[RMDB]
RNA sequence: GGGAACGACUCGAGUAGAGUCGAAAACAGGCUGGAUUACAUCAAUAGUAACUUGAGCAGAAGUAAACAGAACAAGAAGUACUGCCGUUAUUCAAGUUCAAAGUUCACACUAUCGCAAUAAAUAUAACGUAUCCUGUUUGUUCGCAAACAGGAUACGAAAAGAAACAACAACAACAAC
Reactivity to DMS in 0.01 (KOAc 150mM, MgCl2 10mM, bicine 150mM(pH8.5), 24C), signal-to-noise 2, nucleotides 027 to 126: c080a020g030g000c070u000g030g030a110u000u010a030c080a090u010c120a050a090u000a070g020u000a050a070c040u010u000g010a100g000c030a030g010a040a080g030u010a040a040a040c080a110g010a090a040c130a110a150g000a080a060g000u000a050c020u000g010c080c070g030u020u000a090u010u010c030a060a180g000u010u000c020a020a030a050g000u000u000c070a050c120a120c050u010a060u000c090g010c140a100a040u000a020a070a050u010a110u030a060a130
Reactivity to 2A3 in 0.01 (KOAc 150mM, MgCl2 10mM, bicine 150mM(pH8.5), 24C), signal-to-noise 2, nucleotides 027 to 126: c020a010g000g070c020u060g040g040a080u060u060a030c000a040u060c040a000a080u070a140g060u100a010a090c030u030u020g000a010g000c030a020g060a150a010g050u060a040a020a060c050a030g080a090a010c040a090a100g240a110a010g000u060a030c000u010g060c000c010g010u000u050a060u040u010c030a020a000g010u000u040c030a060a040a000g020u070u070c040a040c000a000c100u030a070u080c030g000c060a040a060u120a160a130a010u300a070u040a170a010